[RMDB]
RNA sequence: GGGAACGACUCGAGUAGAGUCGAAAACCCUGUGUUAAUUAUACAUCAGGGCGACCAUGUAUAAUUAACAGGUCGACCGAUUAGGUACGGUGGACAUGCGAAAGCAUGUCCAUCGUACUUAAUCGGAGCUCCUUCAUCGGUUCGCCGAUGAAGGAGCAAAAGAAACAACAACAACAAC
Reactivity to DMS in 0.01 (KOAc 150mM, MgCl2 10mM, bicine 150mM(pH8.5), 24C), signal-to-noise 1, nucleotides 027 to 126: c030c000c010u000g030u000g010u000u000a010a000u000u000a010u000a000c000a010u020c230a190g050g010g010c300g000a270c000c010a070u000g000u000a000u010a010a000u010u000a010a010c010a000g030g000u010c150g000a160c000c000g000a030u000u010a010g000g030u000a000c000g020g000u000g000g000a000c000a030u000g000c010g020a150a150a160g000c000a000u000g000u000c000c000a000u000c010g000u000a000c000u000u000a000a000u010c000g010g000a070
Structure probing data (DMS) for a 177-nucleotide construct. The RNA was probed in 150 mM KOAc, 10 mM MgCl2 and 150 mM bicine (pH 8.5) at 24 C. The DMS profile rests on 1,172 reads.